[RMDB]
RNA sequence: GGGAACGACUCGAGUAGAGUCGAAAAAAGCACCCGAAACUUCGGCGACUGGGGUUGUCCAUAACCCGUGGUUCUUCCUCAAUGCUCUCCUGCGCGGCGUCAACAUCAACUGAGGGAGUUUCGGUAAAUGUGUGCCAAAUUUCGAUUUGGCACACAUAAAAGAAACAACAACAACAAC
Reactivity to DMS in 0.01 (KOAc 150mM, MgCl2 10mM, bicine 150mM(pH8.5), 24C), signal-to-noise 2, nucleotides 027 to 126: a070a170g020c140a110c120c010c010g030a030a030a010c110u000u000c030g000g000c030g010a050c070u020g040g000g000g000u000u000g030u040c060c000a020u040a110a100c040c000c000g040u020g000g000u000u040c010u000u000c020c020u000c080a210a070u080g000c050u010c030u000c010c020u010g000c030g030c050g030g000c080g000u020c030a140a180c110a080u000c080a070a050c150u000g000a060g000g000g000a060g000u000u000u000c000g000g000u020a070a100
Reactivity to 2A3 in 0.01 (KOAc 150mM, MgCl2 10mM, bicine 150mM(pH8.5), 24C), signal-to-noise 2, nucleotides 027 to 126: a010a000g150c050a030c000c010c000g030a040a020a020c010u040u020c020g080g000c060g070a050c050u060g010g010g000g000u020u030g020u060c020c010a040u040a090a120c000c000c000g040u040g020g010u180u100c000u040u030c010c000u020c020a030a060u180g020c000u000c000u010c020c010u040g000c060g000c010g090g020c020g010u030c020a070a040c010a100u080c030a030a080c060u100g030a140g010g050g000a050g000u010u000u000c010g000g000u020a040a090

Structure probing data (DMS and 2A3) for a 177-nucleotide construct. The DMS profile rests on 2,686 reads. DMS adducts were read by reverse transcription with MarathonRT. 2A3 is a SHAPE reagent: it acylates the 2'-hydroxyl of flexible nucleotides of all four kinds. 2A3 adducts were read by reverse transcription with SuperScript II with manganese. The reactions ran in a buffer of 150 mM KOAc, 10 mM MgCl2 and 150 mM bicine (pH 8.5), at 24 C.